[RMDB]
RNA sequence: GGGAACGACUCGAGUAGAGUCGAAAAUGAACCCAGGCUGCGCUUAGGGAUUGUAGAGAAUAUCAACCUGACAGAGCGAUCGGGAAUCAAGAAGCUUCCGGCGAACAACCCCUAUUGAGGCGAAAAAGGGUUUUUAAUACUUCGGUAUUAAAAACCCAAAAGAAACAACAACAACAAC
Reactivity to 2A3 in 0.01 (KOAc 150mM, MgCl2 10mM, bicine 150mM(pH8.5), 24C), signal-to-noise 2, nucleotides 027 to 126: u200g030a020a070c010c000c010a030g040g060c020u050g000c000g000c050u020u010a040g000g010g040a210u060u000g000u080a090g000a030g070a160a090u140a010u100c010a000a020c000c000u030g040a020c030a090g150a020g050c000g070a100u090c030g080g000g020a020a070u120c070a030a000g050a110a000g010c000u010u010c030c000g020g000c010g020a010a000c000a000a010c000c000c000c010u000a040u160u100g020a030g060g010c070g040a160a000a000a000a020
Reactivity to DMS in 0.01 (KOAc 150mM, MgCl2 10mM, bicine 150mM(pH8.5), 24C), signal-to-noise 2, nucleotides 027 to 126: u010g060a230a120c030c000c020a110g030g000c070u020g000c000g020c020u000u010a070g000g000g000a120u010u010g010u000a090g010a170g000a030a040u030a050u020c040a130a160c000c000u000g000a050c080a050g000a110g000c090g000a160u010c000g000g000g000a030a090u040c100a050a190g000a070a050g010c140u000u000c000c000g020g020c010g000a050a020c000a030a010c080c000c000c000u000a010u030u000g010a050g000g020c000g020a080a030a010a100a170
This 177-nucleotide RNA was probed chemically with 2A3 and DMS. The 2A3 profile rests on 880 reads. For DMS, 2,139 sequencing reads were counted. High 2A3 reactivity points to a flexible backbone, as in loops and unpaired stretches. Reactivities are given for positions 27 through 126. The RNA was probed in 150 mM KOAc, 10 mM MgCl2 and 150 mM bicine (pH 8.5) at 24 C. It was measured as part of the RMDB library OK1LIB.